The data come from the RNA Mapping Database (RMDB), library OK2TST. Chemical mapping of a 177-nucleotide RNA with 2A3 and DMS. 2A3 adducts were read by reverse transcription with SuperScript II with manganese. For 2A3, 826 sequencing reads were counted. The DMS profile rests on 1,237 reads.

[RMDB]
RNA sequence: GGGAACGACUCGAGUAGAGUCGAAAAUUGAGCAGGCGGGCGUGCACUCCGGUGACUCCGCAUGUUCUCUGCCAGCCUACACCUUAAGUCAGGAAAUUCAGGAUGUGAUGCGCCAGCAGGUGCAGAAUCCCUAUCCCUGGUUCGCCAGGGAUAGGGAAAAAGAAACAACAACAACAAC
Reactivity to 2A3 in 0.01 (KOAc 150mM, MgCl2 10mM, bicine 150mM(pH8.5), 24C), signal-to-noise 1, nucleotides 027 to 126: u100u030g000a000g020c000a020g010g010c000g000g080g000c110g030u170g140c020a010c020u020c050c150g000g000u000g020a000c000u010c020c010g020c000a010u020g020u040u010c040u040c000u040g040c000c020a060g000c040c000u040a050c030a040c040c000u050u130a090a090g020u100c070a000g000g170a080a140a090u100u070c020a010g090g070a160u090g070u040g130a040u020g000c020g050c050c000a080g170c050a040g130g000u020g000c020a010g040a070a040
Reactivity to DMS in 0.01 (KOAc 150mM, MgCl2 10mM, bicine 150mM(pH8.5), 24C), signal-to-noise 2, nucleotides 027 to 126: u010u010g010a060g010c000a030g000g000c010g020g010g030c280g020u020g010c040a020c010u010c180c130g010g030u000g000a050c020u010c010c020g010c010a020u000g000u000u000c000u010c100u000g000c090c020a060g020c030c010u000a060c070a110c040c050u020u010a040a080g020u010c110a090g010g000a020a080a080u010u000c070a120g000g020a080u000g000u010g030a140u000g000c060g020c030c020a120g010c130a100g040g020u000g000c060a030g000a100a110